Chemical mapping of a 177-nucleotide RNA with DMS.
RNA sequence: GGGAACGACUCGAGUAGAGUCGAAAAGAUAUGGAUUUCUGGGAGGCCAAUAACACCGACGAUGAAAGAAGUCGGAAACGACUUCUGGAGUCGGGUGUUAUUGGCCGAAGAACAGAAAUCCUAAGUCCAGAGAUAUGUGGUUCGCCACAUAUCUCUGAAAAGAAACAACAACAACAAC
Reactivity to DMS in 0.01 (KOAc 150mM, MgCl2 10mM, bicine 150mM(pH8.5), 24C), signal-to-noise 1, nucleotides 027 to 126: g010a170u010a300u010g010g000a030u000u000u000c000u000g000g000g010a120g030g040c000c000a000a030u000a000a000c000a010c010c000g030a190c060g030a030u010g000a300a160a000g000a020a010g000u000c030g020g000a030a160a160c010g030a030c000u010u000c000u000g000g000a300g000u000c000g040g000g000u000g000u000u000a020u000u000g000g050c020c000g030a000a030g010a130a300c000a000g000a000a000a020u000c000c000u000a050a130g000u000c090
It was measured as part of the RMDB library TTRINS. DMS adducts were read by reverse transcription with MarathonRT.